About this RNA: Structure probing data (DMS and 2A3) for a 207-nucleotide construct. The reactions ran in a buffer of 150 mM KOAc, 10 mM MgCl2 and 150 mM bicine (pH 8.5), at 24 C. The 2A3 profile rests on 536 reads. The data come from the RNA Mapping Database (RMDB), library OK3TST. For DMS the reverse transcriptase was MarathonRT. For 2A3 the reverse transcriptase was SuperScript II with manganese. DMS (dimethyl sulfate) methylates the pairing face of unpaired adenines and cytosines. For DMS, 3,210 sequencing reads were counted.
[RMDB]
RNA sequence: GGGAACGACUCGAGUAGAGUCGAAAAUAUAGAAACAUCAGAUAAUAGUGUUCCUGUUAUAACUGUAGAAGAAGUAUAUCCUGUUAUAAGUAUUUCUGUUCCAUGAUAUCUUACAAUCAUUCCAACAUAAGAUGAUGUCCAGUAUGCUGUAUUAGUAGAUAACCACUUCUUUCGAGAAGUGGUUAUCAAAAGAAACAACAACAACAAC
Reactivity to DMS in 0.01 (KOAc 150mM, MgCl2 10mM, bicine 150mM(pH8.5), 24C), signal-to-noise 2, nucleotides 027 to 156: u010a110u000a080g020a080a050a030c020a040u000c010a090g030a230u000a090a110u000a080g020u010g020u000u010c020c020u010g040u000u000a060u010a060a090c060u000g010u000a060g020a080a090g000a060a100g040u000a130u000a110u010c040c030u010g050u000u010a090u000a050a110g020u000a070u000u010u000c010u000g010u000u000c020c070a100u020g030a110u000a030u000c010u000u000a020c090a060a080u000c020a080u000u010c010c020a040a040c100a050u000a060a060g020a080u000g030a060u000g000u000c060c020a070g000u000a090u000g020c010u000g000u000a140u000u010a120g030u000a130
Reactivity to 2A3 in 0.01 (KOAc 150mM, MgCl2 10mM, bicine 150mM(pH8.5), 24C), signal-to-noise 1, nucleotides 027 to 156: u160a000u020a020g050a060a080a000c020a020u060c000a000g020a040u090a150a060u040a150g090u020g040u170u000c010c010u000g050u020u000a030u030a070a020c020u080g030u120a000g050a030a020g010a040a030g090u080a030u010a060u220c010c000u020g040u120u120a080u060a110a040g000u030a080u040u090u000c010u000g040u160u000c000c010a020u040g030a100u060a010u050c090u070u030a040c060a100a030u020c000a130u220u000c060c030a030a100c010a120u020a000a000g030a030u050g000a000u020g000u020c000c000a020g010u010a040u040g020c060u090g000u030a050u080u080a120g000u000a000